[RMDB]
Structure probing data (2A3) for a 207-nucleotide construct.
RNA sequence: GGGAACGACUCGAGUAGAGUCGAAAACUUAGGUACACAGAAGGAGCCAAAUUCAGGCUGCUUAUGCUCAGCCCAGUCAUGCAUUCAAGGCACUGAGUGAUGCUAUUGACCAAGACAGACCCAGCCUCUGCUCCCAUAGAGCUCACAUUCUGGUGGAGAUGGAAAAUGGCUUCGGCCAUUUUCCAUCAAAAGAAACAACAACAACAAC
Reactivity to 2A3 in 0.01 (KOAc 150mM, MgCl2 10mM, bicine 150mM(pH8.5), 24C), signal-to-noise 2, nucleotides 027 to 156: c030u100u060a010g020g000u130a030c040a020c020a030g030a060a060g060g070a030g010c090c010a130a080a180u300u180c070a050g000g000c000u020g040c050u200u080a050u300g010c070u040c020a050g030c000c010c010a020g030u050c070a050u070g040c010a000u060u090c020a060a150g120g050c030a030c050u060g010a070g040u080g010a070u030g000c030u060a050u130u230g000a000c010c020a030a010g050a050c000a000g050a030c000c000c000a000g030c000c010u080c010u090g010c030u010c000c020c000a030u030a010g080a000g040c000u020c010a110c000a140u000u110c070u060g050g030u020g060g080a090